[RMDB]
RNA sequence: GGGAACGACUCGAGUAGAGUCGAAAAGAUAUGGAGAUGAACUACCUCCGAAACAGGCGUUGAAAGCCACUAAAUCGGAAACGAUUUAGUGGCUGGAGCCUGAGAUAGCUGAGGCAUCUCCUAAGUCCAGUAACUAAUCGUUCGCGAUUAGUUACUGAAAAGAAACAACAACAACAAC
Reactivity to DMS in 0.01 (KOAc 150mM, MgCl2 10mM, bicine 150mM(pH8.5), 24C), signal-to-noise 3, nucleotides 027 to 126: g020a080u000a260u000g010g010a020g010a010u010g000a090a080c100u020a300c010c010u000c000c050g010a140a180a150c020a010g010g030c000g020u000u020g000a170a170a060g010c000c000a000c010u000a000a000a010u000c000g000g000a110a090a190c000g010a020u000u000u000a000g020u000g000g000c000u000g000g010a090g010c000c000u000g000a010g010a060u000a100g040c240u020g010a010g000g020c010a020u000c010u000c000c010u000a040a100g010u010c050
Reactivity to 2A3 in 0.01 (KOAc 150mM, MgCl2 10mM, bicine 150mM(pH8.5), 24C), signal-to-noise 2, nucleotides 027 to 126: g040a030u090a080u190g020g000a000g000a000u000g010a120a060c030u140a090c300c000u000c010c010g020a000a070a020c010a000g000g000c020g040u160u220g200a270a110a010g000c010c010a000c000u000a000a010a000u000c020g040g000a080a050a050c020g000a020u050u000u000a020g000u010g000g000c000u000g030g000a000g010c000c020u000g010a000g040a120u290a010g150c250u080g020a020g000g020c000a010u000c010u050c010c000u010a080a000g000u010c010
Conditions: 150 mM KOAc, 10 mM MgCl2 and 150 mM bicine (pH 8.5), 24 C. An RNA of 177 nucleotides, treated with DMS and 2A3 and read out base by base. For DMS, 3,473 sequencing reads were counted.